[RMDB]
RNA sequence: GGGAACGACUCGAGUAGAGUCGAAAAAGUUCGCGCUUCCGUGAAACGCGAAAAUCGGACGGUGGCUGCAAGUCGCAUCCCAAAACCGCGGCAAGUGGAGUUAGCGAGAGGAGGCUGGGUUUUGGCUAGAACACACGGUACUUCGGUACCGUGUGAACUUGAGAAGCAGAUUCGUCUGCUUCUCAAGAAAAGAAACAACAACAACAAC
Reactivity to DMS in 0.01 (KOAc 150mM, MgCl2 10mM, bicine 150mM(pH8.5), 24C), signal-to-noise 1, nucleotides 027 to 156: a060g030u000u010c000g060c040g050c010u000u000c020c190g010u000g000a040a000a050c000g000c000g000a000a030a120a170u000c110g020g010a160c030g000g010u000g000g020c060u000g000c070a060a120g020u010c020g040c010a150u000c000c010c020a040a060a110a080c070c050g000c000g030g030c080a080a160g010u010g000g000a110g030u000u000a080g030c040g000a110g000a090g070g000a060g030g020c050u000g000g030g020u000u000u000u000g000g020c030u000a110g000a120a200c020a030c000a000c010g000g010u000a010c000u000u000c300g060g050u000a000c020c020g030u000g020u000g000a000a060
Reactivity to 2A3 in 0.01 (KOAc 150mM, MgCl2 10mM, bicine 150mM(pH8.5), 24C), signal-to-noise 2, nucleotides 027 to 156: a010g070u010u030c000g010c010g000c070u090u000c020c050g090u070g100a130a070a020c030g000c020g040a040a000a000a060u150c050g030g020a040c050g010g030u030g010g040c050u040g020c080a050a040g020u030c020g000c020a050u070c000c000c010a000a100a020a020c030c040g030c000g020g000c040a110a040g050u100g070g080a080g040u070u120a030g030c030g020a020g010a020g110g000a060g030g030c070u050g030g020g000u020u040u050u030g010g010c010u030a060g030a130a010c000a000c000a010c000g000g000u000a000c000u010u070c160g050g000u000a010c000c000g010u000g000u000g020a000a000